[RMDB]
RNA sequence: GGGAACGACUCGAGUAGAGUCGAAAAUGAAACUUUUACACCCAAUGAUAUUGUCGUUUGUCCGACGGUCGAGAAUCGUGACUCGUUGCGAAGGAAGUUGGCGAACGCAUACUCUGACUUGAAGGGUGUGAAAUACCCGUUUCGACGGGUAUUUCACAAAAGAAACAACAACAACAAC
Reactivity to DMS in 0.01 (KOAc 150mM, MgCl2 10mM, bicine 150mM(pH8.5), 24C), signal-to-noise 2, nucleotides 027 to 126: u000g000a200a100a060c160u010u020u010u010a100c040a000c000c000c030a100a050u000g000a030u000a040u000u010g000u090c000g000u000u000u000g000u010c030c020g000a060c030g000g020u060c010g050a130g000a150a110u010c080g000u000g000a050c040u070c230g080u080u000g010c060g050a050a090g050g030a070a190g020u000u000g020g010c100g000a000a000c000g010c020a000u000a010c230u000c020u030g030a220c230u030u040g000a070a170g000g000g000u000
Reactivity to 2A3 in 0.01 (KOAc 150mM, MgCl2 10mM, bicine 150mM(pH8.5), 24C), signal-to-noise 3, nucleotides 027 to 126: u130g040a020a050a040c030u050u050u070u120a020c020a040c000c050c000a070a000u220g040a030u020a040u100u210g280u300c000g000u000u000u060g100u160c010c000g010a000c060g010g100u120c050g020a040g080a200a140u090c050g050u020g040a060c030u000c080g120u100u110g070c020g020a030a080g120g000a120a100g040u030u020g020g000c000g000a000a000c000g000c010a000u030a010c020u000c000u060g200a220c120u210u230g070a160a130g080g000g000u000